[RMDB]
RNA sequence: GGGAACGACUCGAGUAGAGUCGAAAAGCCCAGAAGCCUCCCCUCAAAAUCGUUUCAGUCCAAAAUUGAUUCGGCGGCCCUGUCAUGAGGCCGAAACGAAGGCACGUACCCGUUCGAAUGGCGUCGGAACUUUCAGUCGUAUUCGUACGACUGAAAACUUACGACCUAUAUUCGUAUAGGUCGUAAGAAAAGAAACAACAACAACAAC
Reactivity to 2A3 in 0.01 (KOAc 150mM, MgCl2 10mM, bicine 150mM(pH8.5), 24C), signal-to-noise 1, nucleotides 027 to 156: g050c030c020c000a060g150a180a030g070c000c020u000c000c020c000c000u030c000a060a070a000a010u020c000g000u000u000u050c050a070g020u020c040c030a080a140a120a190u050u110g030a120u060u000c020g020g050c000g000g020c030c050c020u180g080u200c010a120u090g010a140g010g000c000c010g020a000a000a000c000g030a040a010g000g020c040a010c110g050u070a030c020c030c010g030u030u060c050g160a120a020u080g030g010c040g020u040c030g010g040a030a040c000u040u000u000c000a000g000u000c000g000u000a000u010u010c080g030u020a000c000g000a000c030u000g020a000a000a000a000
Reactivity to DMS in 0.01 (KOAc 150mM, MgCl2 10mM, bicine 150mM(pH8.5), 24C), signal-to-noise 1, nucleotides 027 to 156: g000c000c010c000a150g010a120a200g020c000c010u010c020c010c010c010u000c070a080a070a100a120u000c030g000u000u000u010c010a110g010u000c020c080a080a060a140a180u000u010g000a120u010u000c050g020g060c080g010g010c040c020c010u010g000u000c110a110u010g010a100g000g010c000c030g000a010a010a020c040g020a080a070g000g040c040a030c000g000u000a050c040c000c010g000u000u000c060g000a060a090u000g020g000c030g000u020c010g000g000a060a090c090u000u000u000c000a010g020u000c030g030u000a050u000u000c230g020u000a000c000g010a030c000u000g000a000a010a030a110